[RMDB]
The record gives the reactivity of an RNA of 207 nucleotides to DMS and 2A3. DMS adducts were read by reverse transcription with MarathonRT. The RNA was probed in 150 mM KOAc, 10 mM MgCl2 and 150 mM bicine (pH 8.5) at 24 C. For 2A3, 768 sequencing reads were counted. 2A3 adducts were read by reverse transcription with SuperScript II with manganese. For DMS, 1,951 sequencing reads were counted.
RNA sequence: GGGAACGACUCGAGUAGAGUCGAAAAGAAAGGUGUAAUACUUUCAAACAGUGGAAGUUAAAAUGCCAGGCGUGUAAGCCUCAGUGAAAUUGAGCAGCAUCACGUCACCACGACUUGUGGUCCAGCUGUUUAUUGCAAAGACUCCAUCCUGCGUUAAAUUUAGUCCGUCAUUCGUGACGGACUAAAUAAAAGAAACAACAACAACAAC
Reactivity to DMS in 0.01 (KOAc 150mM, MgCl2 10mM, bicine 150mM(pH8.5), 24C), signal-to-noise 1, nucleotides 027 to 156: g000a060a050a010g000g020u010g000u000a170a140u000a070c000u000u000u020c010a100a110a030c090a080g040u000g010g000a050a070g010u000u010a000a070a150a100u000g020c020c070a090g030g010c010g070u010g020u020a100a180g030c030c000u000c010a110g000u000g010a120a030a230u000u000g020a040g010c020a150g000c040a280u000c010a090c010g010u000c020a030c020c000a030c050g000a120c140u010u000g010u000g000g010u000c030c170a150g010c000u010g060u000u000u000a040u000u020g030c030a050a070a070g020a040c010u000c050c030a160u000c060c070u000g000c070g010u010u000a030a080
Reactivity to 2A3 in 0.01 (KOAc 150mM, MgCl2 10mM, bicine 150mM(pH8.5), 24C), signal-to-noise 2, nucleotides 027 to 156: g050a020a080a000g010g000u020g010u020a010a140u060a170c010u000u040u040c000a030a080a050c040a030g010u020g030g040a070a060g010u110u230a180a130a030a010u060g060c050c000a000g010g010c010g000u000g010u070a070a040g010c010c000u010c000a020g030u090g260a100a200a150u040u030g000a020g030c160a000g000c000a010u060c000a030c000g000u000c020a000c020c020a010c030g210a260c100u290u300g000u000g020g010u020c010c000a040g050c040u000g030u000u020u010a100u090u130g010c020a000a000a080g000a030c000u000c020c000a010u000c020c000u070g020c050g120u080u190a060a130